[RMDB]
Record summary
The record gives the reactivity of an RNA of 177 nucleotides to 2A3 and DMS. For DMS, 1,428 sequencing reads were counted. It was measured as part of the RMDB library OK1LIB. 2A3 adducts were read by reverse transcription with SuperScript II with manganese. Conditions: 150 mM KOAc, 10 mM MgCl2 and 150 mM bicine (pH 8.5), 24 C.
RNA sequence: GGGAACGACUCGAGUAGAGUCGAAAAACGAACCACACAGGCAUAUGCUGAUGCAAGAGAAAACGGAUACACACAGCAUCGACUUUUUGCGGAAGGACACAGAUUUGCGUGUGGUUAUCCUUAGACCGAUGGAGGAUCGUUUCGACGAUCCUCCAUCAAAAGAAACAACAACAACAAC
Reactivity to 2A3 in 0.01 (KOAc 150mM, MgCl2 10mM, bicine 150mM(pH8.5), 24C), signal-to-noise 3, nucleotides 027 to 126: a000c120g010a000a010c000c000a000c000a020c010a030g060g170c000a020u030a020u260g030c040u130g030a060u070g010c030a010a010g020a010g080a100a120a090a030c110g050g000a030u130a070c040a000c040a010c040a100g070c000a010u030c030g080a090c000u060u040u010u080u160g060c080g040g050a050a030g060g140a020c010a010c020a150g030a110u020u050u040g000c000g000u000g000u010g000g000u020u020a040u040c000c000u060u110a080g030a070c080c050
Reactivity to DMS in 0.01 (KOAc 150mM, MgCl2 10mM, bicine 150mM(pH8.5), 24C), signal-to-noise 2, nucleotides 027 to 126: a070c250g030a010a050c000c000a020c020a030c040a130g010g020c030a030u000a000u070g000c050u000g000a230u030g000c030a030a040g000a030g000a070a010a110a170c140g000g000a040u000a060c060a160c120a040c200a210g030c020a030u000c050g000a200c050u000u000u000u000u010g000c010g000g000a130a060g000g000a160c100a150c210a060g010a080u020u000u020g000c000g090u010g000u000g000g000u000u000a020u000c030c000u000u050a090g010a150c200c040